[RMDB]
RNA sequence: GGGAACGACUCGAGUAGAGUCGAAAAAGGGCACCUGUGGUCUGCAGUGGUGAUGCCCCGGUGCCUCUUAGCACUGUCAGCAGCUGAAGGAAGUGCAGUCACACCAGAGCCGCUUGCUCUGCAGGCCUGGCCAGGGGUGCGCUGAUUCUCCUGCCUACAUUAUAUGGGAGUUCGCUCCCAUAUAAUGAAAAGAAACAACAACAACAAC
Reactivity to 2A3 in 0.01 (KOAc 150mM, MgCl2 10mM, bicine 150mM(pH8.5), 24C), signal-to-noise 5, nucleotides 027 to 156: a000g040g020g000c030a040c030c020u140g070u070g300g010u030c040u040g000c020a010g010u080g120g070u050g020a040u220g000c000c000c000c020g000g010u020g000c080c000u050c020u040u100a010g000c000a020c030u060g070u190c030a050g040c040a030g050c090u140g060a080a030g130g040a060a030g040u010g010c010a020g070u050c050a010c010a000c050c010a000g010a020g040c000c010g040c050u030u060g020c020u020c020u110g010c010a010g010g020c000c010u040g030g050c060c030a060g010g030g010g010u020g010c070g050c030u020g010a080u100u010c050u030c030c010u040g050c020c010u070a060
Reactivity to DMS in 0.01 (KOAc 150mM, MgCl2 10mM, bicine 150mM(pH8.5), 24C), signal-to-noise 2, nucleotides 027 to 156: a050g030g000g020c030a020c010c020u000g000u000g000g020u000c030u000g010c030a070g010u020g000g010u000g010a090u010g000c020c010c000c040g040g010u000g020c010c020u000c070u000u000a110g020c020a050c040u010g000u010c060a100g020c070a250g010c090u000g000a130a160g020g010a150a040g030u010g010c020a100g010u000c060a050c020a050c020c000a070g000a090g020c010c100g010c040u000u000g010c030u000c060u000g030c010a040g010g000c010c020u010g030g020c050c070a160g010g000g010g010u010g000c020g010c030u000g010a220u000u010c030u000c010c010u000g000c050c010u010a160